An RNA of 207 nucleotides, treated with DMS and 2A3 and read out base by base. The RNA was probed in 150 mM KOAc, 10 mM MgCl2 and 150 mM bicine (pH 8.5) at 24 C. For 2A3, 2,156 sequencing reads were counted. Source: RMDB library OK3TST, as collected in RNAgym.
RNA sequence: GGGAACGACUCGAGUAGAGUCGAAAAAAUUAGCAGGUGUAGUGGCAUGCAUCUGUGGUCCCAGCUACUUAGCAUGCUGGGGCAGGAGGGCUGCUUGAGUCCAGGAGGUCAAGGCUACAGUGAGCCAUAAUUAUGCCACUGCCCUCCAGCCUGGGUGAGUUAUUGAGUUAUUCGUAACUCAAUAACUAAAAGAAACAACAACAACAAC
Reactivity to DMS in 0.01 (KOAc 150mM, MgCl2 10mM, bicine 150mM(pH8.5), 24C), signal-to-noise 2, nucleotides 027 to 156: a030a070u010u000a220g000c010a000g010g060u000g020u010a060g030u000g000g020c040a090u010g010c010a020u000c010u000g020u000g030g000u010c020c000c000a140g010c020u040a200c140u010u000a130g040c090a060u000g030c000u010g000g000g020g030c000a030g030g020a070g000g020g020c030u030g020c030u030u000g000a100g020u000c010c040a070g020g010a200g010g020u000c070a050a070g030g000c000u000a090c090a080g000u010g020a130g030c000c060a080u000a040a140u000u000a110u000g000c000c000a030c030u000g000c020c020c010u010c020c000a110g000c020c000u000g010g020g010u000g020
Reactivity to 2A3 in 0.01 (KOAc 150mM, MgCl2 10mM, bicine 150mM(pH8.5), 24C), signal-to-noise 3, nucleotides 027 to 156: a010a000u300u190a030g030c040a010g010g020u060g000u040a030g000u030g030g000c010a000u020g000c000a090u070c080u090g300u070g160g010u030c000c020c000a000g010c000u030a040c060u130u190a080g080c080a100u120g000c030u010g000g020g010g000c000a000g060g040a030g040g000g000c020u030g000c000u110u140g030a020g000u030c010c020a050g060g040a020g040g020u100c100a020a080g010g000c000u060a070c030a060g020u100g180a030g020c010c000a030u110a010a080u190u150a030u030g010c000c000a000c000u010g000c010c000c000u010c010c000a020g020c000c010u040g020g000g050u120g040